The record gives the reactivity of an RNA of 207 nucleotides to DMS and 2A3. Conditions: 150 mM KOAc, 10 mM MgCl2 and 150 mM bicine (pH 8.5), 24 C. 2A3 adducts were read by reverse transcription with SuperScript II with manganese. For DMS the reverse transcriptase was MarathonRT. The DMS profile rests on 3,248 reads.
[RMDB]
RNA sequence: GGGAACGACUCGAGUAGAGUCGAAAAAGAUCAGUUCGCUGAUCUAAAAAUCCUAAGUCACUCCGUGAUCUCUAGCGUGGACGAGGAUCAAUCGGAAACGAUUGGGAGUCUCGGGUCACGCAUAGUGAUAUGGAAAAAAGCAGUGUUCGCACUGCAAUUCAGAUACACUGUUCGCAGUGUAUCUGAAAAAAGAAACAACAACAACAAC
Reactivity to DMS in 0.01 (KOAc 150mM, MgCl2 10mM, bicine 150mM(pH8.5), 24C), signal-to-noise 1, nucleotides 027 to 156: a080g020a010u000c000a000g010u000u010c300g040c030u000g010a020u010c000u000a010a090a060a070a090u010c030c000u000a090a190g000u010c080a150c100u000c040c000g010u000g020a010u000c010u000c040u010a090g000c040g030u000g000g010a060c010g030a060g020g010a180u000c000a010a010u000c000g020g000a170a130a200c020g000a030u000u000g010g040g020a170g010u000c000u000c000g020g010g000u000c000a010c020g000c040a030u000a010g010u000g010a020u000a150u000g000g000a000a040a070a100a110a140g010c020a040g020u000g030u000u000c080g020c010a030c010u000g000c010a010a050
Reactivity to 2A3 in 0.01 (KOAc 150mM, MgCl2 10mM, bicine 150mM(pH8.5), 24C), signal-to-noise 4, nucleotides 027 to 156: a000g010a000u010c000a010g040u090u070c190g020c140u010g000a010u000c010u030a020a030a020a010a030u040c020c000u080a180a050g210u150c060a060c140u000c010c020g030u060g250a150u000c010u010c000u060a020g010c000g000u020g010g020a000c000g000a020g010g010a070u060c010a000a000u000c000g060g060a150a090a070c010g000a000u000u010g060g060g030a210g170u000c000u000c010g180g020g100u030c000a000c000g000c010a010u010a000g010u010g000a000u010a030u080g000g000a110a050a030a000a000a030g020c000a000g000u020g020u120u210c180g080c090a010c000u010g000c000a000a000